[RMDB]
RNA sequence: GGGAACGACUCGAGUAGAGUCGAAAAGAAAAAGAGCACGAAGUACAGAAGGCCUAAUGUACUGAGAUACGAAAGUAUCGAAGAGUUGUGCUCGGAUACGAAGGCCUAAGUAUCUACUCUGAAGAAAGGGAAUUUAUACCUUCGGGUAUAAAUUCCCAAAAGAAACAACAACAACAAC
Reactivity to DMS in 0.01 (KOAc 150mM, MgCl2 10mM, bicine 150mM(pH8.5), 24C), signal-to-noise 1, nucleotides 027 to 126: g000a070a090a050a190a080g000a000g010c070a060c030g030a080a050g000u020a000c000a120g000a080a090g030g000c000c000u000a130a230u000g010u000a020c030u000g000a110g010a020u000a000c040g050a130a190a020g020u000a000u010c010g000a120a170g000a160g000u000u020g000u000g000c000u000c000g000g000a070u000a120c040g000a080a070g000g020c000c000u040a130a210g000u000a020u000c040u000a100c050u000c050u020g000a100a150g040a160a070a070
Reactivity to 2A3 in 0.01 (KOAc 150mM, MgCl2 10mM, bicine 150mM(pH8.5), 24C), signal-to-noise 2, nucleotides 027 to 126: g130a010a070a010a000a020g000a000g000c010a020c030g030a150a000g010u010a010c000a010g020a190a090g150g000c010c000u060a040a010u060g000u010a000c000u030g040a010g000a080u000a010c000g010a130a000a100g010u010a000u000c010g000a040a030g070a020g130u170u180g000u000g010c000u000c010g000g010a010u020a020c010g000a170a020g000g000c000c010u020a060a000g000u000a010u000c000u010a050c020u010c030u020g170a120a080g090a140a140a100
Source: RMDB library OK1LIB, as collected in RNAgym. An RNA of 177 nucleotides, treated with DMS and 2A3 and read out base by base. Reactivities are given for positions 27 through 126. DMS adducts were read by reverse transcription with MarathonRT. The RNA was probed in 150 mM KOAc, 10 mM MgCl2 and 150 mM bicine (pH 8.5) at 24 C. Values are in units of 0.01, from 0 to 300, in steps of 10.